[RMDB]
RNA sequence: GGGAACGACUCGAGUAGAGUCGAAAAAGCAACUGACCCCGUAGAAAACUAUCUAAAGGGUCUGUUGGCUGGAUUGAGCCAAUCACAUCCUCUUCCCUGAGAAUGGGGACCUUGAGAUACUGAGCUGAUUAGAUAAUGGUUAGUUCUUGGGCUGAAAUGGCCAUAUCUUAUUCGUAAGAUAUGGCCAAAAAGAAACAACAACAACAAC
Reactivity to DMS in 0.01 (KOAc 150mM, MgCl2 10mM, bicine 150mM(pH8.5), 24C), signal-to-noise 1, nucleotides 027 to 156: a040g020c010a030a060c040u000g000a020c000c000c000c000g030u000a020g010a040a140a190a230c180u000a090u010c000u040a050a030a040g000g040g010u000c030u000g020u000u000g000g010c080u020g010g010a180u010u000g010a080g040c040c040a090a110u000c050a070c120a130u000c010c000u000c040u020u010c060c040c000u000g000a110g010a040a100u020g020g000g000g000a010c060c020u010u020g010a120g000a100u010a070c070u000g000a070g000c000u020g010a130u010u000a060g010a170u000a040a110u000g020g010u000u000a050g000u000u000c000u000u000g040g010g010c020u000g000a060a100a170
Reactivity to 2A3 in 0.01 (KOAc 150mM, MgCl2 10mM, bicine 150mM(pH8.5), 24C), signal-to-noise 1, nucleotides 027 to 156: a020g030c000a000a000c000u020g020a030c040c000c000c030g080u030a000g000a020a220a050a130c060u090a130u110c000u050a060a030a010g000g000g020u000c060u030g000u000u000g030g030c020u020g040g050a030u020u060g030a010g030c090c000a030a040u050c050a050c000a100u030c000c000u000c030u080u040c000c020c000u020g030a050g020a160a100u200g000g000g030g040a020c010c060u040u090g050a040g010a030u040a120c090u080g000a020g000c030u030g020a030u000u080a050g040a090u130a190a090u070g030g010u010u020a020g000u000u000c000u000u030g050g040g000c020u000g030a060a120a110
The record gives the reactivity of an RNA of 207 nucleotides to DMS and 2A3.
Reactivities are given for positions 27 through 156.
2A3 adducts were read by reverse transcription with SuperScript II with manganese.